[RMDB]
The record gives the reactivity of an RNA of 177 nucleotides to DMS. Values cover nucleotides 27 to 126. The RNA was probed in 150 mM KOAc, 10 mM MgCl2 and 150 mM bicine (pH 8.5) at 24 C. It was measured as part of the RMDB library OK2TRN.
RNA sequence: GGGAACGACUCGAGUAGAGUCGAAAAGGCGUCUUCGCUGCCUCGGCCGCCAUGCACUGACCGGUAGCCGCCGUAAUGGCGGCAUUGUUCCCAUAAAGGGAUGUGGGUGUGGGUGGCGAAGUAGCAGAAUCACCACCUCGUUCGCGAGGUGGUGAUUAAAAGAAACAACAACAACAAC
Reactivity to DMS in 0.01 (KOAc 150mM, MgCl2 10mM, bicine 150mM(pH8.5), 24C), signal-to-noise 1, nucleotides 027 to 126: g010g030c040g000u000c030u010u000c000g010c030u000g000c010c000u000c100g000g070c110c000g000c060c060a150u020g020c040a070c060u000g000a300c070c110g030g000u010a160g000c020c010g010c020c020g020u040a100a080u010g000g020c010g030g000c000a010u000u000g000u000u000c060c010c010a130u010a030a090a170g000g020g010a180u010g030u000g000g010g040u010g000u010g000g000g000u000g020g020c010g010a010a030g000u010a130g060c020a120g030